[RMDB]
This 177-nucleotide RNA was probed chemically with 2A3 and DMS. Values cover nucleotides 27 to 126.

RNA sequence: GGGAACGACUCGAGUAGAGUCGAAAAGAUAUGGAUUACUCUGCUUUUGACGCGAAACAGUCGGAAACGACUGCACUCGCGAUAAGCAGGAGUAAUCCUAAGUCAAACCGUUCGUUCGCGAACGGAAGAAUUAACCAGAGUUCGCUCUGGUUAAUUCAAAAGAAACAACAACAACAAC
Reactivity to 2A3 in 0.01 (KOAc 150mM, MgCl2 10mM, bicine 150mM(pH8.5), 24C), signal-to-noise 5, nucleotides 027 to 126: g010a010u090a040u160g000g000a000u010u010a000c010u000c010u010g050c060u110u150u150u290g300a170c060g030c000g020a050a100a030c020a000g000u000c010g010g030a040a060a050c020g010a010c010u010g020c050a060c060u010c000g020c010g040a040u040a090a000g000c000a080g070g060a040g000u000a000a000u000c000c010u010a040a010g030u010c050a060a060a150c000c000g000u000u000c000g010u040u070c300g000c010g190a010a010c000g010g020a010a040
Reactivity to DMS in 0.01 (KOAc 150mM, MgCl2 10mM, bicine 150mM(pH8.5), 24C), signal-to-noise 4, nucleotides 027 to 126: g000a050u000a300u010g000g000a030u000u010a000c010u000c000u000g000c000u000u000u010u010g030a260c130g010c000g000a020a120a210c010a000g000u000c010g000g000a080a110a220c010g000a030c000u000g000c090a110c240u000c000g010c010g010a080u000a010a000g000c000a040g010g010a030g000u000a010a000u000c000c000u000a010a080g010u000c030a120a120a230c000c000g020u000u000c010g020u010u020c210g030c010g010a010a000c000g000g010a040a070